[RMDB]
RNA sequence: GGGAACGACUCGAGUAGAGUCGAAAAGACUCAAGCCCUGUAGCUUGGGAGGCGCCGUGGCGCGAGAGCAAGGCGGUGGAGCCCUCCGACAACAUUCUCAGAAAGGAGGAUGCGCAACGCACCAGGUCCUAUAGUCCUAGUUCGCUAGGACUAUAGGAAAAGAAACAACAACAACAAC
Reactivity to 2A3 in 0.01 (KOAc 150mM, MgCl2 10mM, bicine 150mM(pH8.5), 24C), signal-to-noise 9, nucleotides 027 to 126: g060a020c020u020c080a040a040g040c000c010c020u080g080u140a060g010c020u050u120g020g000g010a010g030g010c010g000c000c010g030u050g020g000c020g010c020g030a070g010a010g050c020a020a030g070g000c000g000g020u030g050g060a080g020c010c000c000u000c000c000g010a010c010a050a000c000a030u070u010c010u010c020a110g250a210a140a020g250g010a010g000g010a010u030g010c020g000c030a040a050c060g030c020a040c020c030a030g030g080u010
Reactivity to DMS in 0.01 (KOAc 150mM, MgCl2 10mM, bicine 150mM(pH8.5), 24C), signal-to-noise 8, nucleotides 027 to 126: g010a140c040u000c030a110a100g010c060c020c110u010g000u010a070g000c030u010u030g010g010g010a030g000g010c050g020c010c020g020u010g000g020c300g020c010g000a100g000a180g000c030a060a300g010g000c020g000g010u000g020g010a200g000c090c010c000u000c010c010g000a150c080a090a170c020a040u000u000c010u030c020a140g010a070a110a120g010g010a030g000g000a020u010g000c070g000c050a060a090c090g000c090a070c140c050a090g000g010u010
An RNA of 177 nucleotides, treated with 2A3 and DMS and read out base by base. DMS adducts were read by reverse transcription with MarathonRT. It was measured as part of the RMDB libraries RFM100 and RFMREP.